Chemical mapping of a 170-nucleotide RNA with DMS and 2A3.
The 2A3 profile rests on 4,794 reads.
The RNA was probed in 150 mM KOAc, 10 mM MgCl2 and 150 mM bicine (pH 8.5) at 24 C.
[RMDB]
RNA sequence: GGGAACGACUCGAGUAGAGUCGAAAAGAAAAUAAAUUCACACCUUUGAGUGUGGAGUCUACACCAGUUGAACCUCCAACUGUAGAUGUGGUAGCACUUCAACAGGAAAUGACAAUUGUCAAAUGUACGCGCUACGGCUUCGGCCGUAGCAAAAGAAACAACAACAACAAC
Reactivity to DMS in 0.01 (KOAc 150mM, MgCl2 10mM, bicine 150mM(pH8.5), 24C), signal-to-noise 4, nucleotides 027 to 129: g000a100a070a030a060u000a140a160a170u000u000c000a030c020a100c000c010u040u120u000g070a230g020u030g010u010g020g000a000g000u050c040u010a020c080a050c100c020a050g050u010u010g010a060a250c220c070u070c170c050a020a080c000u030g020u030a070g030a190u000g080u020g000g000u050a060g010c090a020c090u000u000c070a100a030c130a050g020g020a100a070a110u020g000a050c090a280a140u040u130g020u020c040a030a100a120u080g020u040a010c000g090c190
Reactivity to 2A3 in 0.01 (KOAc 150mM, MgCl2 10mM, bicine 150mM(pH8.5), 24C), signal-to-noise 3, nucleotides 027 to 129: g050a000a040a030a000u270a020a090a070u190u120c040a020c000a000c000c000u040u100u180g090a140g020u000g010u000g020g020a030g090u000c020u020a000c020a000c000c000a010g000u010u010g030a020a070c030c040u140c020c000a030a000c000u020g060u100a020g000a130u020g030u000g050g000u070a000g020c000a000c000u120u100c000a020a070c010a130g000g040a040a060a040u030g020a020c070a090a300u130u150g000u000c000a010a010a060u220g010u040a040c100g000c000